[RMDB]
RNA sequence: GGGAACGACUCGAGUAGAGUCGAAAAGAUGACAUCUACAGAAGAAAACUUUGGAGAAAAGCUUCAUGACAUUGGAUUUGGCAAUGGUUUCUUGGAUAAGACAUAAAAGGCACAGGCAACAAAAGCCAAAAUAGACAAAUUGGGCUUUGUCAAAAUGCUAACGAAGGUAGUUCGCUACCUUCGUUAGAAAAGAAACAACAACAACAAC
Reactivity to 2A3 in 0.01 (KOAc 150mM, MgCl2 10mM, bicine 150mM(pH8.5), 24C), signal-to-noise 2, nucleotides 027 to 156: g070a070u070g000a010c010a130u000c010u070a010c040a050g090a100a030g050a040a130a030a100c110u200u160u080g040g020a090g070a020a140a020a000g010c000u050u060c040a040u050g060a030c000a080u010u120g100g010a080u100u020u130g020g000c000a000a050u090g000g000u000u050u080c010u010u040g000g030a030u060a130a090g040a030c010a020u190a040a120a030a030g010g010c010a010c010a050g040g000c000a010a010c000a030a120a000a000g020c010c030a020a090a030a100u090a020g020a000c010a060a060a050u050u030g020g020g000c000u080u000u000g030u000c000a040a020a000a080u130g020
Reactivity to DMS in 0.01 (KOAc 150mM, MgCl2 10mM, bicine 150mM(pH8.5), 24C), signal-to-noise 1, nucleotides 027 to 156: g000a120u000g020a100c010a140u010c000u000a260c000a120g050a130a160g000a170a130a060a030c080u000u000u000g000g030a150g010a090a130a090a110g000c030u000u000c040a100u010g020a080c030a070u030u020g010g010a230u000u000u010g000g020c020a080a080u010g060g010u000u020u000c000u030u020g010g010a200u000a030a090g000a030c030a050u000a020a080a080a110g000g000c070a010c080a000g010g030c020a060a100c050a000a000a110a210g000c000c020a010a020a050a150u020a100g000a080c050a030a030a170u000u000g000g000g000c080u000u020u000g000u000c000a100a060a060a060u000g030